[RMDB]
RNA sequence: GGGAACGACUCGAGUAGAGUCGAAAAACACUCAAUUUUCACGCUUUCUGUCUUCUUUCUUCCAGGGCUCUCCCCUUGCCCUAGGCUCUGGCCGUUGCGCCCGGCGGGGUCAACUCCAUGAUUAGCAUAUUGUUGAAAGUUUCGACUUUCAACAAUAAAAAGAAACAACAACAACAAC
Reactivity to 2A3 in 0.01 (KOAc 150mM, MgCl2 10mM, bicine 150mM(pH8.5), 24C), signal-to-noise 9, nucleotides 027 to 126: a000c090a030c030u100c050a120a150u060u050u120u120c070a060c040g040c010u020u070u030c020u040g100u010c010u050u000c000u030u090u010c010u060u020c020c030a020g020g030g000c010u000c020u040c030c000c000c000u010u060g010c000c000c000u020a040g030g000c000u000c010u050g130g000c020c010g070u060u060g020c020g020c030c010c000g030g000c010g000g010g010g000u010c020a030a040c020u000c010c020a060u110g030a140u140u090a020g030c040a040
Reactivity to DMS in 0.01 (KOAc 150mM, MgCl2 10mM, bicine 150mM(pH8.5), 24C), signal-to-noise 7, nucleotides 027 to 126: a070c130a130c060u020c050a080a090u020u010u010u000c050a070c090g010c030u000u010u010c020u010g000u020c030u000u010c030u000u000u000c020u010u000c040c050a080g010g010g010c030u010c050u000c020c010c010c030u010u000g010c010c000c030u010a090g020g010c030u000c030u000g010g010c040c030g010u000u010g010c080g010c040c040c010g010g000c050g000g000g000g000u010c060a040a120c070u000c030c040a090u010g000a110u010u010a090g010c110a130